[RMDB]
RNA sequence: GGGAACGACUCGAGUAGAGUCGAAAAAUAUCUGAACGGCUCUGUGUAGGCGAGCGCCGUUUUCAGCAUGGAGCGCCCCUAUACGGCGAGUAUCUCUGCACACGUGUAAAGGAGGAUCGUGGCAUUAAGUCUUAUGAAGGUUCGCCUUCAUAAGACUAAAAGAAACAACAACAACAAC
Reactivity to DMS in 0.01 (KOAc 150mM, MgCl2 10mM, bicine 150mM(pH8.5), 24C), signal-to-noise 3, nucleotides 027 to 126: a110u000a080u000c070u020g010a100a130c040g010g010c020u000c000u000g020u000g020u000a030g020g010c190g000a090g040c110g010c000c020g020u000u010u020u020c170a210g010c220a070u010g010g010a110g000c030g030c010c010c010c020u000a040u010a030c040g020g000c010g000a070g020u000a080u010c010u000c020u000g020c040a070c040a030c040g030u010g010u010a050a070a100g010g000a140g000g000a070u000c030g020u000g000g010c040a070u010u000a090
Reactivity to 2A3 in 0.01 (KOAc 150mM, MgCl2 10mM, bicine 150mM(pH8.5), 24C), signal-to-noise 3, nucleotides 027 to 126: a000u080a050u070c030u070g070a090a010c000g010g030c010u000c010u050g030u010g000u060a020g030g050c150g040a080g040c040g030c000c020g000u010u020u110u200c030a050g030c030a050u110g090g030a130g070c010g020c000c000c000c000u030a020u020a060c050g030g020c000g010a000g010u020a050u020c020u020c030u030g000c040a070c000a010c180g040u050g010u120a140a190a080g080g060a040g040g020a040u060c010g000u000g020g000c010a010u100u090a040